Chemical mapping of a 177-nucleotide RNA with DMS and 2A3. The data come from the RNA Mapping Database (RMDB), library OK2TST. For 2A3, 2,077 sequencing reads were counted. Conditions: 150 mM KOAc, 10 mM MgCl2 and 150 mM bicine (pH 8.5), 24 C.

[RMDB]
RNA sequence: GGGAACGACUCGAGUAGAGUCGAAAAUGCUGCGGCAGGCAGCACUAAGCUGUAUUUUGAAUGCAGAGACUUGGUUGUCGAUGUGAAACACCCCAGCCCCUGGCUGCUCGUUUCUGCCACGCACCAGUAAGUACAGGCUAUUCGUAGCCUGUACUUAAAAAGAAACAACAACAACAAC
Reactivity to DMS in 0.01 (KOAc 150mM, MgCl2 10mM, bicine 150mM(pH8.5), 24C), signal-to-noise 4, nucleotides 027 to 126: u010g000c020u010g050c060g000g020c070a080g000g000c010a020g000c050a060c070u010a080a110g020c020u000g000u000a030u000u010u020u010g010a090a070u010g000c020a030g000a250g010a150c030u000u010g020g000u010u000g010u000c020g020a170u000g000u010g010a120a060a110c080a080c100c070c120c010a050g010c010c010c060c070u010g010g000c090u000g000c050u010c130g010u000u000u000c020u000g020c010c020a060c060g000c040a100c030c020a090g010
Reactivity to 2A3 in 0.01 (KOAc 150mM, MgCl2 10mM, bicine 150mM(pH8.5), 24C), signal-to-noise 2, nucleotides 027 to 126: u050g020c050u030g020c010g030g060c060a050g050g000c010a000g020c000a020c050u020a060a010g020c010u010g010u120a130u030u220u110u270g180a130a040u150g010c000a000g030a010g020a080c020u090u060g070g030u130u060g230u010c000g040a100u030g040u050g060a050a090a000c030a040c020c020c000c010a000g000c000c000c000c030u010g020g000c050u010g000c010u020c050g020u000u070u040c000u020g010c010c020a010c010g030c000a020c020c010a030g050